[RMDB]
Conditions: 150 mM KOAc, 10 mM MgCl2 and 150 mM bicine (pH 8.5), 24 C. An RNA of 177 nucleotides, treated with DMS and 2A3 and read out base by base. For DMS, 19,364 sequencing reads were counted. The 2A3 profile rests on 3,890 reads.
RNA sequence: GGGAACGACUCGAGUAGAGUCGAAAAGUGGGGGAUCUCGAUAAGCGACGCUUGUAUCUUGUUCGAUAGUAAAGCUUUAUGGGGACAUGCUUUUGAUAUUCUUACAGAUCAAGUUCAGGAGUAUUUCCAAAGACCAAUUAUUCGUAAUUGGUCUUUGAAAAGAAACAACAACAACAAC
Reactivity to DMS in 0.01 (KOAc 150mM, MgCl2 10mM, bicine 150mM(pH8.5), 24C), signal-to-noise 9, nucleotides 027 to 126: g020u010g010g010g010g010g000a090u000c030u000c040g010a120u010a070a100g010c090g010a090c270g010c030u000u000g000u010a030u000c010u010u010g020u000u000c130g010a040u000a070g010u000a040a040a060g010c020u010u010u000a090u020g010g000g010g020a180c170a040u000g000c020u000u010u000u000g010a110u000a060u000u000c040u010u010a060c090a060g010a040u000c040a020a040g000u000u010c120a110g010g000a070g010u000a080u000u000u000c020
Reactivity to 2A3 in 0.01 (KOAc 150mM, MgCl2 10mM, bicine 150mM(pH8.5), 24C), signal-to-noise 4, nucleotides 027 to 126: g130u150g000g010g000g030g010a020u000c030u020c030g050a060u050a100a010g060c030g080a030c090g000c020u040u060g000u110a040u040c020u040u150g050u080u030c020g030a030u010a040g120u100a050a050a020g010c000u120u160u140a180u160g020g000g020g030a010c000a030u080g010c010u040u060u010u050g060a040u030a070u180u040c020u010u050a030c050a030g050a060u050c030a040a020g000u110u060c030a040g000g010a020g020u040a060u050u050u040c020